[RMDB]
RNA sequence: GGGAACGACUCGAGUAGAGUCGAAAACAUGUCGCUGCUGGCCCCCGCGGGCGAACUGAUCUCCUUCGGCGCGCUGUCGGGUCAGCCGCUGAUCAUCGACACCGGCGCCGUCAUCUUCAAACAGGCAAUGCGCCUACUAUUUCGAUAGUAGGCGCAUAAAAGAAACAACAACAACAAC
Reactivity to DMS in 0.01 (KOAc 150mM, MgCl2 10mM, bicine 150mM(pH8.5), 24C), signal-to-noise 1, nucleotides 027 to 126: c060a060u000g010u010c040g000c030u010g000c040u000g010g010c040c000c020c030c140g000c090g000g100g030c040g030a050a060c070u010g000a040u000c070u010c070c070u000u010c000g010g000c020g030c010g040c230u020g000u000c040g020g010g040u010c010a070g000c100c100g000c030u000g000a010u000c030a100u000c030g020a030c060a040c010c020g030g000c000g010c010c040g000u000c140a020u010c060u000u010c130a080a050a140c090a060g000g050c160a110